[RMDB]
RNA sequence: GGGAACGACUCGAGUAGAGUCGAAAAUCCUAAGUCAUACUAUACCGUAUUCCCACCGCAAGCUAAUUCGGAAACGAAUUAGUGAUGACCGGUGGGAGAUACGGGAGAGUAUGAUAUGGAAAACUAACUACUAACCGUUCGCGGUUAGUAGUUAGAACACGUAUACUGGGUUCGCCCAGUAUACGUGAAAAGAAACAACAACAACAAC
Reactivity to 2A3 in 0.01 (KOAc 150mM, MgCl2 10mM, bicine 150mM(pH8.5), 24C), signal-to-noise 5, nucleotides 027 to 156: u040c020c000u040a100a010g020u000c000a000u000a010c000u020a020u080a190c000c010g000u000a010u000u020c000c000c000a010c010c000g040c030a070a200g000c010u010a000a010u000u000c000g060g020a080a090a070c010g000a000a000u000u000a000g010u010g060a170u190g040a050c070c040g000g000u000g000g000g000a000g020a000u000a000c010g010g010g000a040g000a000g000u000a000u010g010a000u000a060u050g050g020a030a090a020a070c010u000a000a000c000u000a000c000u000a000a000c000c000g030u050u040c280g020c010g130g000u000u000a000g000u000a000g000u000u000a000g000a000a000
Reactivity to DMS in 0.01 (KOAc 150mM, MgCl2 10mM, bicine 150mM(pH8.5), 24C), signal-to-noise 1, nucleotides 027 to 156: u000c000c000u000a050a220g030u000c000a010u000a010c000u000a050u000a050c000c010g040u000a010u010u000c010c010c000a020c010c020g000c010a130a300g010c000u010a000a000u000u010c000g020g000a230a070a300c000g010a000a000u000u000a000g020u000g010a020u000g000a150c210c000g020g030u010g010g000g000a000g010a010u000a000c030g010g000g010a030g020a020g000u000a020u000g010a030u000a220u000g030g000a090a110a140a220c000u000a000a010c000u000a000c000u000a010a000c000c000g030u000u000c290g070c040g000g000u010u000a000g020u000a000g000u000u000a000g000a070a200